RNA sequence: GGGAACGACUCGAGUAGAGUCGAAAACGAAAUACAGUGAGUGGACGGAAUAAAUCCCCUUCCCACCUCCCCACUGUCCACUCACUGUCUUCCUAAUAGGAAAUAUAAAUCGGGGGUGGGAAGGGGACAUGACUAUACGUUUCGACGUAUAGUCAUGAAAAGAAACAACAACAACAAC
Reactivity to DMS in 0.01 (KOAc 150mM, MgCl2 10mM, bicine 150mM(pH8.5), 24C), signal-to-noise 2, nucleotides 027 to 126: c110g000a080a070a180u010a050c000a030g020u000g000a000g040u000g000g000a010c000g000g000a040a080u040a050a110a120u010c010c000c000c000u000u000c000c030c000a000c000c000u000c000c020c140c090a150c160u010g000u010c000c010a000c010u000c010a000c000u000g000u060c090u000u000c000c010u000a170a120u040a130g010g020a070a050a050u020a040u010a060a070a140u020c080g010g000g000g000g010u010g000g010g000a000a010g000g000g020g050a000
Reactivity to 2A3 in 0.01 (KOAc 150mM, MgCl2 10mM, bicine 150mM(pH8.5), 24C), signal-to-noise 9, nucleotides 027 to 126: c070g050a060a050a010u300a040c000a000g000u000g010a000g010u000g000g010a010c030g030g090a070a050u160a100a110a070u080c000c000c000c010u000u000c000c000c000a000c000c000u030c040c090c030c040a060c020u050g000u000c000c000a000c010u000c000a000c000u000g000u000c010u020u000c000c010u050a120a070u090a160g150g080a030a100a010u290a040u080a040a150a040u220c110g000g000g000g010g000u000g000g000g000a000a000g000g000g000g000a000